[RMDB]
RNA sequence: GGGAACGACUCGAGUAGAGUCGAAAAUAUAAAGUUAAGCCCCAUGGAUAAUCCGAAGUUUAAUUGAUUUUCCGGCUUUGCAUAACCUGGAUGAUCUGUUCCUAAAUCAUCGAACAUUCCACUGCCAGAUACGAGGAGUAUUCGUACUCCUCGUAUCAAAAGAAACAACAACAACAAC
Reactivity to 2A3 in 0.01 (KOAc 150mM, MgCl2 10mM, bicine 150mM(pH8.5), 24C), signal-to-noise 6, nucleotides 027 to 126: u230a000u040a020a100a000g040u040u070a040a020g030c030c000c010c000a040u120g010g010a060u060a140a040u100c050c060g060a100a020g040u100u130u240a140a100u120u130g050a030u060u030u060u010c020c000g010g000c030u040u060u070g020c040a050u050a140a060c010c020u080g100g000a030u030g030a030u010c040u100g050u030u050c010c000u060a050a050a030u060c030a030u050c020g020a040a010c020a050u050u070c020c000a050c070u040g050c060c020a010
Reactivity to DMS in 0.01 (KOAc 150mM, MgCl2 10mM, bicine 150mM(pH8.5), 24C), signal-to-noise 2, nucleotides 027 to 126: u090a080u020a050a110a100g050u000u010a070a110g010c000c010c170c050a120u010g010g010a140u000a060a050u010c020c050g000a080a080g000u020u010u000a040a090u010u010g000a030u000u020u000u030c050c020g000g000c010u000u010u000g000c060a060u020a080a090c090c030u000g000g000a020u020g020a010u010c030u020g000u000u020c010c030u010a020a090a070u010c000a000u000c050g000a060a090c060a070u000u000c000c010a060c060u020g000c050c080a110
Chemical mapping of a 177-nucleotide RNA with 2A3 and DMS. Source: RMDB library OK1LIB, as collected in RNAgym. For 2A3 the reverse transcriptase was SuperScript II with manganese. The reactions ran in a buffer of 150 mM KOAc, 10 mM MgCl2 and 150 mM bicine (pH 8.5), at 24 C.